Source: RMDB library OK3TST, as collected in RNAgym. Chemical mapping of a 207-nucleotide RNA with 2A3 and DMS.

RNA sequence: GGGAACGACUCGAGUAGAGUCGAAAAACGUCAUCAAUGUGCAUGUGUUUGUCACGGCGGAACGUAAAUUGUUGUUCAUCAUCGAAGUGCCUUUGGUCAGCAGCGAAGCGUUUGACGUGUUUCACAGCAUACCGCUGCCGUAUUGCGACAAAUCGCAGUAGAACUCCGUAUUCGUACGGAGUUCUACAAAAGAAACAACAACAACAAC
Reactivity to 2A3 in 0.01 (KOAc 150mM, MgCl2 10mM, bicine 150mM(pH8.5), 24C), signal-to-noise 2, nucleotides 027 to 156: a000c020g050u040c000a060u010c020a090a240u190g050u080g030c080a040u070g130u040g020u160u000u150g130u120c020a010c020g050g020c090g040g000a000a000c060g020u100a000a020a300u050u030g020u000u040g000u020u020c080a050u000c000a000u100c030g060a130a060g040u050g110c000c000u080u110u060g000g010u020c040a000g020c010a000g000c010g010a100a000g000c000g050u070u040u110g080a060c010g050u050g110u050u060u100c000a000c000a010g000c000a000u030a170c020c020g000c010u000g010c000c000g000u070a060u010u170g040c010g000a020c070a030a140a060u170c050g000c020a010
Reactivity to DMS in 0.01 (KOAc 150mM, MgCl2 10mM, bicine 150mM(pH8.5), 24C), signal-to-noise 1, nucleotides 027 to 156: a040c040g010u000c040a140u020c110a130a200u000g040u000g030c060a100u000g050u020g010u000u040u010g020u000c020a050c050g000g020c150g000g050a080a040c030g010u010a080a140a130u010u000g020u020u000g000u010u000c060a110u000c040a170u000c040g010a110a090g060u020g040c010c000u000u050u000g020g030u000c010a080g030c060a110g030c030g020a090a070g030c010g000u010u000u000g000a050c000g020u000g120u000u000u000c000a120c040a100g000c010a040u000a130c090c060g050c000u010g000c060c040g040u000a090u000u020g010c030g050a190c020a030a090a080u000c040g010c040a220
Conditions: 150 mM KOAc, 10 mM MgCl2 and 150 mM bicine (pH 8.5), 24 C. 2A3 adducts were read by reverse transcription with SuperScript II with manganese. The 2A3 profile rests on 754 reads.